[RMDB]
RNA sequence: GGGAACGACUCGAGUAGAGUCGAAAAGAUAUGGAUUAGUCUGCUAUGACUAUGGUUAAGACAAUACUUCGGAAACGAAGUAUUGUCUUAACCACGAAUCAUAGAACUACAGGACUAAUCCUAAGUCCAUUCGCUAUAUGUUCGCAUAUAGCGAAUGAAAAGAAACAACAACAACAAC
Reactivity to DMS in 0.01 (KOAc 150mM, MgCl2 10mM, bicine 150mM(pH8.5), 24C), signal-to-noise 5, nucleotides 027 to 126: g010a070u010a300u010g010g010a020u000u000a000g010u000c000u000g000c000u000a010u010g000a020c100u000a220u000g000g010u000u000a010a010g000a040c000a010a020u000a000c000u010u000c010g000g010a160a130a260c020g030a020a020g000u000a000u000u000g000u000c000u000u000a010a000c000c000a000c090g000a070a080u000c000a000u000a000g000a130a130c270u010a230c300a180g000g000a020c000u000a010a000u000c000c000u020a020a070g000u010c040